[RMDB]
RNA sequence: GGGAACGACUCGAGUAGAGUCGAAAAAUGGAAACAGCCGCUUAUCGUGAAGCUGCAGCAUGUCAUCUUGCUAAAGCCUUACAAACAUACAGCGAGACUGGUAGUGAUCUUCUUUACCAACCACCCAUCGUCUUAAAUGGUUCGCCAUUUAAGACGAAAAAGAAACAACAACAACAAC
Reactivity to 2A3 in 0.01 (KOAc 150mM, MgCl2 10mM, bicine 150mM(pH8.5), 24C), signal-to-noise 3, nucleotides 027 to 126: a010u090g000g010a080a080a030c010a040g040c010c000g010c040u050u040a060u110c060g000u020g050a020a000g010c010u000g000c000a000g010c010a000u010g080u240c040a160u100c090u050u020g000c010u020a030a020a010g050c020c000u060u040a000c020a040a220a020c030a050u090a030c050a000g000c000g030a090g070a100c010u000g000g060u040a030g060u030g100a090u020c050u070u020c000u060u150u040a050c000c000a050a020c000c000a050c000c020c010a050
Reactivity to DMS in 0.01 (KOAc 150mM, MgCl2 10mM, bicine 150mM(pH8.5), 24C), signal-to-noise 3, nucleotides 027 to 126: a120u000g000g030a110a170a210c050a070g000c020c020g000c010u000u000a060u010c200g030u000g000a020a070g010c010u010g020c300a020g010c000a010u010g000u000c160a180u020c090u000u000g020c010u010a030a280a040g010c020c020u000u000a020c040a070a100a110c210a070u000a040c160a030g000c000g000a090g010a180c040u000g020g030u000a100g010u010g010a080u010c120u000u000c050u000u000u000a050c010c060a060a080c080c050a100c000c000c020a130